[RMDB]
RNA sequence: GGGAACGACUCGAGUAGAGUCGAAAAUUGUUGGGGAGAGAUAAAGUGAAUGUGUGUGUCAAUACCACCCGCAGUUACGAUCAAACCUUCACCGGCUAAGGCUUCAGUAGCAGGACCCACGCAAAGAACAGCUGUUAACCUUCGGGUUAACAGCUGUAAAAGAAACAACAACAACAAC
Reactivity to DMS in 0.01 (KOAc 150mM, MgCl2 10mM, bicine 150mM(pH8.5), 24C), signal-to-noise 1, nucleotides 027 to 126: u000u000g020u000u000g030g000g000g000a200g000a110g010a080u000a080a070a190g000u020g000a080a000u000g000u000g000u030g050u030g000u000c080a070a120u070a050c300c030a000c000c030c000g000c060a000g000u000u050a050c100g030a140u000c000a020a300a040c050c020u000u000c000a130c070c090g010g070c010u000a060a050g000g000c010u000u120c000a050g000u000a050g000c030a070g000g000a110c030c000c080a250c100g060c070a130a070a080g000a100